[RMDB]
RNA sequence: GGGAACGACUCGAGUAGAGUCGAAAAUCGCGCUUGGGGUCCGGAUGGCCCCGCCAAACCUGGGUUUGCACGGCGCGCCAGAACGACACCGCUUGUGACACCACAUCGGGCCGGUGGACGUGCACGAUGUAUUUACCGUAUUCGUACGGUAAAUACAAAAAGAAACAACAACAACAAC
Reactivity to 2A3 in 0.01 (KOAc 150mM, MgCl2 10mM, bicine 150mM(pH8.5), 24C), signal-to-noise 9, nucleotides 027 to 126: u050c010g000c000g000c030u070u170g010g000g010g020u060c070c080g200g090a140u270g060g000c010c000c000c000g000c010c000a010a020a030c010c030u160g240g030g000u050u060u080g050c070a050c070g020g000c020g000c010g000c040c010a070g030a110a030c020g040a010c030a030c070c000g040c070u040u050g030u030g060a080c040a060c130c020a040c010a070u090c040g010g030g020c060c060g020g000u030g020g060a080c020g020u040g010c030a020c110g070a050
Reactivity to DMS in 0.01 (KOAc 150mM, MgCl2 10mM, bicine 150mM(pH8.5), 24C), signal-to-noise 9, nucleotides 027 to 126: u010c050g010c040g010c030u000u000g020g010g010g020u010c010c120g010g020a170u010g010g000c010c010c010c020g020c170c060a030a060a080c050c040u010g010g010g010u000u000u000g010c120a050c070g000g000c030g020c040g010c040c030a080g010a110a120c070g000a080c040a100c020c010g010c110u000u000g010u000g000a150c210a150c220c060a050c050a040u000c030g000g000g010c030c020g010g010u000g000g000a110c030g010u000g010c050a060c200g000a110